[RMDB]
Source: RMDB library OK1LIB, as collected in RNAgym. The record gives the reactivity of an RNA of 177 nucleotides to DMS and 2A3. The reactions ran in a buffer of 150 mM KOAc, 10 mM MgCl2 and 150 mM bicine (pH 8.5), at 24 C. Reactivities are given for positions 27 through 126.

RNA sequence: GGGAACGACUCGAGUAGAGUCGAAAAUGCUGAUCGCCCGCAGCGUGUUUGUUCAGGGUUAACAUAAUGAUGAAUUGCGCUUCAUCAUCGCCCCAGCGCACCGGCGCUUGCAGACGCGCCACGCUGAGGCGUCCAUAUAUUUCGAUAUAUGGACGCCAAAAGAAACAACAACAACAAC
Reactivity to DMS in 0.01 (KOAc 150mM, MgCl2 10mM, bicine 150mM(pH8.5), 24C), signal-to-noise 5, nucleotides 027 to 126: u030g000c020u000g000a090u000c100g000c010c010c010g010c010a020g000c050g030u000g000u030u010u020g000u000u000c080a100g000g010g000u010u020a100a100c270a130u050a080a030u010g000a020u000g000a020a030u020u040g030c210g030c150u010u010c010a030u010c000a010u010c150g000c030c010c000c020a000g000c010g010c170a090c240c170g000g000c000g000c000u000u020g030c190a100g000a100c220g010c010g000c000c000a090c040g000c010u010g000a130
Reactivity to 2A3 in 0.01 (KOAc 150mM, MgCl2 10mM, bicine 150mM(pH8.5), 24C), signal-to-noise 8, nucleotides 027 to 126: u100g000c020u020g010a110u150c090g070c020c000c010g040c020a000g000c020g030u060g030u030u100u030g060u020u050c060a050g020g050g010u060u080a130a060c080a140u260a210a040u110g020a000u010g020a020a040u120u240g070c170g040c080u010u010c000a010u000c000a000u040c040g020c000c000c000c000a000g000c000g000c020a050c060c250g040g000c010g000c020u010u180g100c050a030g030a130c070g010c000g000c000c000a010c010g000c010u000g020a040